[RMDB]
RNA sequence: GGGAACGACUCGAGUAGAGUCGAAAACAGCGUGGUUGAUUGCCCACUGAAUUGUGUCGAUAGUCACAUUUGGGUAGUCAGUUUUAAAGCGGCUCAGUACAGUGUCGCCGGUCAGGUCGCCAAAGCGGGUGCGCUGUGCCAGUGCAAGACGACGGGCCACAUAAGCUUCGUUCGCGAAGCUUAUGUGAAAAGAAACAACAACAACAAC
Reactivity to 2A3 in 0.01 (KOAc 150mM, MgCl2 10mM, bicine 150mM(pH8.5), 24C), signal-to-noise 4, nucleotides 027 to 156: c040a020g030c030g060u070g030g080u060u040g010a040u030u030g020c000c030c010a050c090u080g070a090a140u200u060g000u020g020u050c080g100a200u170a300g020u080c010a000c010a010u030u020u030g010g000g000u010a020g010u000c000a000g010u000u030u060u150a080a090a020g010c010g000g000c010u010c030a080g020u070a080c030a070g020u020g070u130c020g020c030c010g030g010u040c050a060g030g000u060c030g000c050c050a100a060a040g070c050g020g050g010u070g030c030g000c020u000g020u030g020c010c020a070g030u070g080c070a070a080g060a020c030g000a000c000g030g020g010c010
Reactivity to DMS in 0.01 (KOAc 150mM, MgCl2 10mM, bicine 150mM(pH8.5), 24C), signal-to-noise 2, nucleotides 027 to 156: c020a100g000c060g000u000g020g020u000u000g010a020u000u000g020c010c000c000a090c200u000g020a090a040u010u010g020u010g030u000c060g020a280u010a110g030u000c030a040c000a070u010u010u010g020g040g040u010a030g040u000c010a020g000u000u010u000u010a050a160a110g000c010g010g000c010u000c030a100g000u000a100c050a100g030u000g010u000c010g010c000c030g010g010u000c070a120g010g000u000c030g020c020c030a040a120a140g000c050g000g000g050u000g000c050g000c040u010g000u010g000c000c010a060g020u000g030c040a050a160g000a050c020g000a070c030g010g010g000c040
Source information
Chemical mapping of a 207-nucleotide RNA with 2A3 and DMS. The reactions ran in a buffer of 150 mM KOAc, 10 mM MgCl2 and 150 mM bicine (pH 8.5), at 24 C. Values cover nucleotides 27 to 156. The data come from the RNA Mapping Database (RMDB), library OK3TST. For 2A3 the reverse transcriptase was SuperScript II with manganese. DMS (dimethyl sulfate) methylates the pairing face of unpaired adenines and cytosines.